[RMDB]
RNA sequence: GGGAACGACUCGAGUAGAGUCGAAAAUGUCGGAAGCAUAGGAUUGAGACAGGAGAUACAGAGCUGUGCGGUGUAUUUUGAUGAUGUGGCCUUAGCCACACCUCUAAACGGAAUCACAACCCCCCGGGUUUGAUUCCGUUCGGGCGACGGCCGAGCCUCCCAAAUAGUAGUUCGCUACUAUUUGGGAAAAAGAAACAACAACAACAAC
Reactivity to DMS in 0.01 (KOAc 150mM, MgCl2 10mM, bicine 150mM(pH8.5), 24C), signal-to-noise 2, nucleotides 027 to 156: u010g020u010c050g020g010a100a160g020c040a080u010a070g020g010a120u030u010g000a100g020a110c110a090g050g010a120g000a180u000a080c080a110g020a110g020c030u010g010u000g040c030g010g050u010g010u000a050u000u000u000u000g010a130u000g010a050u000g020u010g000g010c020c030u000u000a090g000c000c010a100c040a040c010c000u000c040u020a020a020a020c050g000g000a050a030u000c000a040c100a040a050c020c000c030c240c220c160g040g020g010u010u000u010g000a030u000u000c000c000g000u000u010c050g010g010g040c020g010a120c120g040g030c000c020g010a060g000c040c060
Reactivity to 2A3 in 0.01 (KOAc 150mM, MgCl2 10mM, bicine 150mM(pH8.5), 24C), signal-to-noise 1, nucleotides 027 to 156: u120g040u040c040g020g040a080a010g020c030a040u120a120g060g030a070u060u120g030a030g010a060c050a020g020g020a020g000a030u170a110c050a010g050a040g040c030u030g000u050g060c080g000g050u040g020u050a140u060u150u060u130g060a090u050g020a040u050g030u060g080g000c050c060u070u120a030g000c000c000a070c010a050c020c010u050c050u120a060a050a010c030g000g020a000a010u000c000a020c040a100a000c000c010c000c000c120c030g000g000g000u010u000u010g000a000u000u000c000c000g000u020u010c010g000g000g000c030g000a050c030g010g000c000c000g000a010g030c010c030

Source: RMDB library OK3TST, as collected in RNAgym. An RNA of 207 nucleotides, treated with DMS and 2A3 and read out base by base. For DMS, 3,707 sequencing reads were counted. DMS adducts were read by reverse transcription with MarathonRT. The RNA was probed in 150 mM KOAc, 10 mM MgCl2 and 150 mM bicine (pH 8.5) at 24 C.